[RMDB]
Description
Structure probing data (DMS) for a 177-nucleotide construct. For DMS, 2,111 sequencing reads were counted. In probing experiments dimethyl sulfate is read out at A N1 and C N3, which are open when not base-paired.
RNA sequence: GGGAACGACUCGAGUAGAGUCGAAAAGAUAUGGACUCUAUUCUUCGAUAAUUGAGGCAACAGCUCCACCCUUCGGAAACGAAGGUUGGAGACAUGCCUCAAUUAUCGAAUUAGAGAGUCCUAAGUCGUAUACUUAGCACUUCGGUGCUAAGUAUACAAAAGAAACAACAACAACAAC
Reactivity to DMS in 0.01 (KOAc 150mM, MgCl2 10mM, bicine 150mM(pH8.5), 24C), signal-to-noise 2, nucleotides 027 to 126: g020a120u020a300u000g000g050a030c000u000c000u000a080u000u000c060u000u020c010g000a000u000a010a010u000u000g000a020g000g010c010a020a100c290a180g000c020u020c000c010a000c100c010c000u020u020c000g010g000a100a070a250c020g000a010a010g020g000u000u000g000g000a000g020a020c090a110u000g000c000c000u000c010a000a000u000u000a010u000c000g020a010a000u000u000a020g000a030g000a100g000u000c000c010u000a040a050g030u020c140